[RMDB]
RNA sequence: GGGAACGACUCGAGUAGAGUCGAAAACGCACGUCCUGACCCCAGGCGGGUUCGUGGUAGUGGGCGCCGGCGUGACUGUGAACCGCUAUGACGAAGCGUAUCGUAUGAGCCGGAACCUCGACUCCGAGUGUACGGAGAAUUUCGAUUCUCCGUACACAAAAGAAACAACAACAACAAC
Reactivity to DMS in 0.01 (KOAc 150mM, MgCl2 10mM, bicine 150mM(pH8.5), 24C), signal-to-noise 4, nucleotides 027 to 126: c080g000c040a070c050g000u000c020c030u000g000a140c040c020c080c050a160g000g000c050g000g000g000u010u000c020g020u000g010g020u010a050g010u010g000g000g030c300g010c050c010g010g000c040g010u000g000a140c100u000g010u000g010a070a090c300c030g020c020u000a060u010g010a090c130g000a080a050g010c020g020u000a080u000c060g000u000a060u010g000a120g010c000c000g010g010a080a070c030c020u000c030g010a090c080u000c010c050g000a170
Reactivity to 2A3 in 0.01 (KOAc 150mM, MgCl2 10mM, bicine 150mM(pH8.5), 24C), signal-to-noise 3, nucleotides 027 to 126: c040g000c020a030c010g020u040c000c020u050g110a180c000c020c010c050a050g090g000c040g020g010g000u080u060c030g010u050g050g050u080a040g060u130g020g050g030c090g030c010c020g010g000c010g060u070g100a060c060u100g010u010g100a080a050c040c010g000c020u070a090u220g150a080c120g110a080a010g040c010g050u030a050u090c020g010u110a060u150g050a020g030c010c000g030g000a040a040c000c010u050c030g050a070c020u000c040c000g030a040